[RMDB]
RNA sequence: GGGAACGACUCGAGUAGAGUCGAAAAUGAGCAAGAGUGAGGCAGCAGACGGGUGGGGCUUGUAGAAAUUUCUCUGUACCCUUUAGGACUUAGAAAUGACUCCUAAAGCAAUUCUAAGUUUGCUCUUCCACAAGCAUCUGACCUAACAAAGGAAGAGCUCAUUUAGCAUUUUCGAAUGCUAAAUGAGAAAAGAAACAACAACAACAAC
Reactivity to 2A3 in 0.01 (KOAc 150mM, MgCl2 10mM, bicine 150mM(pH8.5), 24C), signal-to-noise 5, nucleotides 027 to 156: u160g000a010g010c030a050a020g020a020g090u070g010a020g050g010c030a020g000c020a010g020a090c050g000g020g040u060g010g020g010g020c020u030u060g030u060a040g070a060a140a050u060u120u030c030u010c020u050g070u130a140c020c000c000u050u050u100a070g010g000a010c010u020u040a020g050a020a070a030u060g070a130c020u060c040c050u160a160a100a020g000c010a030a070u070u020c010u070a040a020g010u020u050u080g010c000u000c000u020u010c010c010a050c030a060a030g030c010a050u060c060u100g100a120c010c030u060a140a030c050a090a090a010g000g000a000a000g000a010g000
Reactivity to DMS in 0.01 (KOAc 150mM, MgCl2 10mM, bicine 150mM(pH8.5), 24C), signal-to-noise 3, nucleotides 027 to 156: u010g010a080g020c020a110a100g000a100g030u000g000a080g010g030c050a080g030c060a080g010a080c060g000g000g010u000g010g010g050g020c030u000u020g000u000a090g000a060a170a110u000u000u000c030u000c010u000g010u000a150c050c030c040u000u000u000a080g010g010a050c030u000u000a050g020a080a070a270u000g000a090c030u000c030c050u000a060a090a080g000c040a050a090u000u000c010u000a030a050g010u000u000u000g000c010u000c030u000u010c020c000a060c050a090a150g000c030a090u010c020u000g010a100c010c040u000a030a110c060a070a080a100g000g000a060a030g000a070g010
About this RNA:
The data come from the RNA Mapping Database (RMDB), library OK3TST. An RNA of 207 nucleotides, treated with 2A3 and DMS and read out base by base. For DMS the reverse transcriptase was MarathonRT. Values cover nucleotides 27 to 156. High 2A3 reactivity points to a flexible backbone, as in loops and unpaired stretches. The reactions ran in a buffer of 150 mM KOAc, 10 mM MgCl2 and 150 mM bicine (pH 8.5), at 24 C. For 2A3, 4,380 sequencing reads were counted. The DMS profile rests on 6,258 reads.